[RMDB]
RNA sequence: GGGAACGACUCGAGUAGAGUCGAAAAACAUAUAUGAACAUAUACAACUAGUACAACAUAUAGAAACAUAUAUAAUAGAUACUAUAAUAUACAUAGAUACAAUAAACUAGAACUAUAGUGAACGUUCGCGUUCGCAAAAGAAACAACAACAACAAC
Reactivity to DMS in 0.01 (KOAc 150mM, MgCl2 10mM, bicine 150mM(pH8.5), 24C), signal-to-noise 2, nucleotides 027 to 135: a110c090a100u000a030u030a050u010g000a000a070c080a080u020a010u000a010c060a050a130c080u000a030g010u030a030c070a090a050c120a060u000a010u000a030g010a170a090a160c050a020u010a070u000a030u000a090a070u020a030g000a180u020a020c010u000a000u000a020a060u010a080u030a070c040a020u020a000g010a080u040a080c080a050a080u040a060a060a080c100u010a010g010a090a070c080u010a090u000a080g010u000g030a030a060c090g020u020u040c100g030c030g000u040u020c080g020c080a060
Reactivity to 2A3 in 0.01 (KOAc 150mM, MgCl2 10mM, bicine 150mM(pH8.5), 24C), signal-to-noise 7, nucleotides 027 to 135: a020c040a000u120a000u030a020u090g090a120a010c050a030u140a010u050a120c060a100a050c060u050a020g050u080a040c040a120a000c040a080u110a010u040a090g090a060a200a000c030a010u180a010u070a070u060a230a070u090a180g060a030u100a090c010u010a010u080a200a090u200a030u040a150c040a030u120a030g070a020u120a130c050a040a140u150a150a130a020c050u060a050g070a100a020c030u060a050u100a200g020u020g020a000a000c000g010u010u060c200g000c010g070u000u000c030g020c070a160